[RMDB]
RNA sequence: GGGAACGACUCGAGUAGAGUCGAAAAGAUAUGGAUCAGUGAAGUGCCAUUCGAUGAAAUCGGAAACGAUGGAGAAUGGACCCACUGAACACUGAUCCUAAGUCAAAUCAGGUGUUCGCACCUGAAACACAAACUGGUAGUUCGCUACCAGUUUGUGAAAAGAAACAACAACAACAAC
Reactivity to 2A3 in 0.01 (KOAc 150mM, MgCl2 10mM, bicine 150mM(pH8.5), 24C), signal-to-noise 2, nucleotides 027 to 126: g020a000u090a050u190g000g010a010u000c000a000g000u020g100a170a010g000u010g090c030c000a020u020u000c030g210a300u040g000a050a020a010u000c010g010g030a090a020a030c010g000a010u000g000g010a010g000a030a010u000g020g000a020c010c060c000a010c010u000g050a100a010c000a000c020u010g010a000u000c000c010u010a150a020g060u020c020a000a000a260u050c010a000g000g000u020g030u070u120c240g010c130a000c000c010u010g000a040a060a000
Reactivity to DMS in 0.01 (KOAc 150mM, MgCl2 10mM, bicine 150mM(pH8.5), 24C), signal-to-noise 3, nucleotides 027 to 126: g020a060u000a300u020g000g000a020u010c020a000g000u000g030a130a030g020u000g010c000c000a010u000u000c000g000a100u010g000a090a150a020u020c000g040g000a160a080a130c020g040a030u000g010g000a060g000a010a010u000g000g000a230c120c300c050a010c010u000g010a130a050c010a020c010u010g020a010u000c000c000u000a010a100g000u000c010a070a060a140u010c010a010g010g010u000g020u010u010c200g060c000a010c020c000u000g000a010a070a260
Source: RMDB library TTRDEL, as collected in RNAgym. An RNA of 177 nucleotides, treated with 2A3 and DMS and read out base by base. For DMS, 1,913 sequencing reads were counted. For 2A3, 3,522 sequencing reads were counted. Reactivities are rounded to 0.1 and cut off at 0 and 3.